[RMDB]
RNA sequence: GGGAACGACUCGAGUAGAGUCGAAAAACUAUGAUUAUUAUCAACCUGAGGCAUACGUACCGUCUACUGACACUUUUAUUGAAAAAGAUGCCUCAAUCAAUGAUGAAAUUGAUCAACUACGACAUUCCCGUCAUCUCAUUUUCGAAUGAGAUGACGGAAAAGAAACAACAACAACAAC
Reactivity to DMS in 0.01 (KOAc 150mM, MgCl2 10mM, bicine 150mM(pH8.5), 24C), signal-to-noise 1, nucleotides 027 to 126: a060c160u040a110u000g000a000u000u000a190u000u000a000u000c000a040a060c300c080u000g010a010g000g000c000a040u000a190c200g000u040a030c140c270g100u000c200u000a100c300u000g000a230c020a100c000u000u010u000u000a110u180u060g030a000a060a000a000a050g000a030u000g000c000c000u070c000a000a020u000c210a080a180u000g000a070u050g010a000a000a280u110u030g000a000u000c050a230a040c180u000a100c130g000a080c290a040u030u070c040
Reactivity to 2A3 in 0.01 (KOAc 150mM, MgCl2 10mM, bicine 150mM(pH8.5), 24C), signal-to-noise 6, nucleotides 027 to 126: a000c190u170a120u180g010a010u060u070a040u130u030a020u080c030a000a090c030c030u010g000a000g000g030c030a040u100a100c170g110u080a050c070c080g030u050c040u080a260c160u280g040a010c010a040c030u060u060u070u190a200u200u190g090a040a030a000a020a010g020a010u000g000c000c000u000c000a000a000u000c000a000a050u050g070a000u040g030a020a080a100u130u100g000a010u020c010a030a070c050u230a050c080g130a000c040a110u110u080c000

An RNA of 177 nucleotides, treated with DMS and 2A3 and read out base by base.
For 2A3, 3,062 sequencing reads were counted.
DMS adducts were read by reverse transcription with MarathonRT.
The data come from the RNA Mapping Database (RMDB), library OK1LIB.
For 2A3 the reverse transcriptase was SuperScript II with manganese.